[RMDB]
RNA sequence: GGGAACGACUCGAGUAGAGUCGAAAAAGAUUGGCUAUCGCACAAGCAAUAGAUAAAAAAGGAUACGUUGAUUCAGUGAAAAACAAUGGCUCAAUUCCUUCCGAUACACUAACAGCCAAAGGAAUUGCUCGUGUAUGUCGUUCGCGACAUACACGAGAAAAGAAACAACAACAACAAC
Reactivity to 2A3 in 0.01 (KOAc 150mM, MgCl2 10mM, bicine 150mM(pH8.5), 24C), signal-to-noise 1, nucleotides 027 to 126: a000g070a000u070u000g040g000c000u000a050u050c060g020c010a000c070a090a010g040c000a020a010u120a120g060a060u300a120a080a000a000a000a000g160g000a020u010a040c100g010u050u180g050a210u040u040c020a060g050u160g300a020a020a020a020a020c120a110a110u060g020g000c030u030c070a060a130u060u060c000c050u000u180c020c000g100a110u160a010c080a000c050u170a210a000c000a110g010c050c000a000a100a000g060g000a000a080u170u220g000
Reactivity to DMS in 0.01 (KOAc 150mM, MgCl2 10mM, bicine 150mM(pH8.5), 24C), signal-to-noise 1, nucleotides 027 to 126: a090g020a000u000u080g000g000c060u050a020u000c000g080c160a130c300a150a080g000c150a030a030u000a220g000a180u000a130a000a000a040a040a060g000g020a100u000a060c200g000u000u000g030a100u000u000c030a000g000u070g000a080a120a120a160a180c210a110a160u000g000g000c020u000c060a000a060u000u000c000c060u000u000c000c000g000a100u100a050c230a050c200u000a020a260c300a000g000c100c030a000a060a180g000g000a020a030u100u000g070